[RMDB]
RNA sequence: GGGAACGACUCGAGUAGAGUCGAAAAGGCUCAGGAUGAACGCUGGCGGCGUGCCUAAUACAUGCAAGUCGAGCGAAUGGAUUAAGAGCUUGCUCUUAUGAAGUUAGCGGCGGACGGGUGAGUAACACCGAACUAGAACAUUCGUGUUCUAGUUCGGAAAAGAAACAACAACAACAAC
Reactivity to 2A3 in 0.01 (KOAc 150mM, MgCl2 10mM, bicine 150mM(pH8.5), 24C), signal-to-noise 5, nucleotides 027 to 126: g040g000c010u020c050a020g120g030a130u110g060a070a020c030g030c040u030g080g030c010g010g000c020g010u030g000c010c010u100a120a030u130a090c070a030u110g040c020a080a070g020u030c020g060a020g020c010g040a030a020u030g010g010a000u010u020a020a000g000a000g000c010u060u090g030c000u030c000u020u030a020u020g010a040a000g000u010u020a020g000c020g170g040c010g000g040a010c020g030g020g000u040g040a070g010u070a100a010c030a010
Reactivity to DMS in 0.01 (KOAc 150mM, MgCl2 10mM, bicine 150mM(pH8.5), 24C), signal-to-noise 5, nucleotides 027 to 126: g010g000c000u000c030a050g010g000a090u000g010a010a110c060g020c020u020g010g020c050g020g010c010g000u010g000c070c040u000a070a090u030a150c140a070u030g000c030a080a080g010u020c030g010a260g030c020g020a040a010u000g000g010a080u000u000a010a020g000a020g020c040u040u010g010c010u000c000u000u000a010u010g010a300a190g010u000u010a090g020c040g000g010c020g000g030a090c080g000g000g000u010g000a080g000u020a060a090c210a130